[RMDB]
RNA sequence: GGGAACGACUCGAGUAGAGUCGAAAACGUAGACCUCAGGCAUCGAGCAUGUGUAUCGGAGCAAGCAUGGCCAGAGUAGUGCCAGAGACAUACGUGGGUCGAAGUGGGGCAUAAAGCAAGGACGGUCCAGGGGCGAGUCGACCCCCCUCGGCACGAGCUGACCUUCAUACUUCGGUAUGAAGGUCAGAAAAGAAACAACAACAACAAC
Reactivity to 2A3 in 0.01 (KOAc 150mM, MgCl2 10mM, bicine 150mM(pH8.5), 24C), signal-to-noise 2, nucleotides 027 to 156: c020g010u000a000g090a090c000c020u040c050a040g050g000c020a100u060c180g040a040g100c060a060u040g020u040g010u060a090u130c110g010g030a050g020c060a090a000g000c030a100u020g140g160c030c040a090g000a020g110u300a000g010u000g010c010c000a000g040a000g000a030c060a090u130a000c030g090u040g020g020g030u030c080g000a060a000g030u060g010g000g000g020c060a040u100a090a070a000g010c110a110a020g070g030a030c050g040g020u040c040c040a020g000g010g000g020c000g040a000g060u010c000g040a080c000c000c000c000c000c020u000c010g030g080c040a010c120g000a030g010
Chemical mapping of a 207-nucleotide RNA with 2A3. The data come from the RNA Mapping Database (RMDB), library VIROID. 2A3 adducts were read by reverse transcription with SuperScript II with manganese. The reactions ran in a buffer of 150 mM KOAc, 10 mM MgCl2 and 150 mM bicine (pH 8.5), at 24 C.